[RMDB]
RNA sequence: GGGAACGACUCGAGUAGAGUCGAAAAGAGGGAAUGAGUAACUCAAUUAGUCUCAGUUACAACUGAAGGGCACAUUGUUGUAAACUAUAAUUGAAAACAUAAAUAUCUUUACCUAGUUUAAAAAUAAAGAUGCUUUAAAAGGAGGAAGGGAAUAGCAUCAGUGACGUAUAUUCGUAUACGUCACUGAAAAAGAAACAACAACAACAAC
Reactivity to 2A3 in 0.01 (KOAc 150mM, MgCl2 10mM, bicine 150mM(pH8.5), 24C), signal-to-noise 2, nucleotides 027 to 156: g080a010g030g030g030a030a100u090g010a060g040u070a040a020c030u010c100a060a090u090u120a100g090u050c030u020c060a010g010u020u100a070c030a090a030c060u080g030a090a110g030g020g010c030a030c010a090u060u070g040u000u010g010u050a080a150a010c030u070a070u100a220a110u080u090g000a070a030a060a000c010a030u150a050a110a030u110a080u020c010u050u070u040a030c000c020u000a020g000u000u200u000a150a240a000a000a000u050a000a000a050g010a010u020g010c010u100u050u080a020a290a000a000g020g020a020g000g030a030a000g030g000g030a020a030u120a090g020c030a040
Reactivity to DMS in 0.01 (KOAc 150mM, MgCl2 10mM, bicine 150mM(pH8.5), 24C), signal-to-noise 1, nucleotides 027 to 156: g020a040g050g020g010a060a050u010g000a160g030u000a110a090c070u020c010a060a110u020u000a070g000u000c020u000c040a060g030u000u000a110c030a040a100c020u000g030a120a080g000g000g070c040a110c100a100u000u000g030u000u000g000u000a030a080a160c040u010a070u000a080a060u020u000g000a070a080a090a050c030a120u000a060a050a210u010a050u010c040u020u000u000a000c000c010u000a100g050u030u000u000a000a180a170a100a040u020a000a030a120g000a060u020g010c040u020u000u000a010a070a050a080g000g000a060g000g000a070a090g010g020g000a050a110u010a040g010c060a160
The data come from the RNA Mapping Database (RMDB), library OK3TST. An RNA of 207 nucleotides, treated with 2A3 and DMS and read out base by base. 2A3 adducts were read by reverse transcription with SuperScript II with manganese. The reactions ran in a buffer of 150 mM KOAc, 10 mM MgCl2 and 150 mM bicine (pH 8.5), at 24 C. The DMS profile rests on 1,970 reads. Values cover nucleotides 27 to 156. For DMS the reverse transcriptase was MarathonRT. Values are in units of 0.01, from 0 to 300, in steps of 10.